[RMDB]
RNA sequence: GGGAACGACUCGAGUAGAGUCGAAAAGAAGGGUGAAAGCCCUUGAUACUGUAGUGGAAAUUACAAAUAAGAAGAGUUCUGAGUUGCUUAAGCAGAACUAAAAUAAAAAGACAAGCAUUAUUACAAACAUGGCGAGGUAAGUUCGCUUACCUCGCAAGCAUGAUCAUAGCUUCGGCUAUGAUCAUGCAAAAGAAACAACAACAACAAC
Reactivity to 2A3 in 0.01 (KOAc 150mM, MgCl2 10mM, bicine 150mM(pH8.5), 24C), signal-to-noise 2, nucleotides 027 to 156: g060a040a010g010g010g000u030g060a110a010a000g000c000c000c000u000u060g010a010u030a050c080u060g050u060a060g000u030g060g090a000a070a100u120u030a040c030a010a110a000u170a250a050g130a150a000g030a010g070u000u010c000u000g010a020g030u080u140g080c010u060u000a040a060g000c000a010g010a010a010c030u070a010a000a000a030u110a010a090a000a000a000g030a010c020a000a000g000c000a020u020u090a090u220u100a130c160a070a090a020c060a050u110g100g000c010g000a000g000g000u000a010a020g000u010u120c100g010c150u010u000a000c000c000u000c000g000c000a000a000

The record gives the reactivity of an RNA of 207 nucleotides to 2A3. For 2A3, 745 sequencing reads were counted. 2A3 adducts were read by reverse transcription with SuperScript II with manganese.